The record gives the reactivity of an RNA of 177 nucleotides to 2A3 and DMS. The DMS profile rests on 8,648 reads. The 2A3 profile rests on 12,986 reads.

[RMDB]
RNA sequence: GGGAACGACUCGAGUAGAGUCGAAAAGUCCGGGCCGAAAGGCAGGACAAGUCGCAUGGGACGAAUAAAAGUCCGAAGACACAUGCAGAGGCCGAAUAUAAGAAGGUCUCAAGGUCCGAAAGGGCCACCAUUGAGUAUGGUUCGCCAUACUCAAUGGAAAAGAAACAACAACAACAAC
Reactivity to 2A3 in 0.01 (KOAc 150mM, MgCl2 10mM, bicine 150mM(pH8.5), 24C), signal-to-noise 8, nucleotides 027 to 126: g000u000c010c000g030g300g000c000c000g060a070a020a020g010g000c000a010g010g000a000c000a000a040g190u130c110g020c020a010u030g050g010g030a010c030g080a130a040u240a250a150a030a020g010u010c010c000g010a060a030g050a000c020a000c000a090u040g000c020a020g010a000g000g000c010c000g060a180a010u210a010u020a170a070g110a070a040g000g000u000c000u000c000a010a030g000g000u000c000c000g030a040a010a030g000g000g000c000c000a010
Reactivity to DMS in 0.01 (KOAc 150mM, MgCl2 10mM, bicine 150mM(pH8.5), 24C), signal-to-noise 5, nucleotides 027 to 126: g050u010c010c000g030g010g010c000c000g000a140a100a130g010g070c000a300g000g000a000c000a130a140g000u030c070g000c010a030u000g010g060g000a000c000g000a150a180u050a080a120a060a250g010u010c000c000g010a140a100g000a160c250a300c010a000u000g000c020a140g000a000g000g000c000c000g000a110a090u040a240u040a140a090g010a170a090g000g010u000c000u000c000a100a050g000g010u000c000c000g000a020a090a170g000g000g000c000c010a090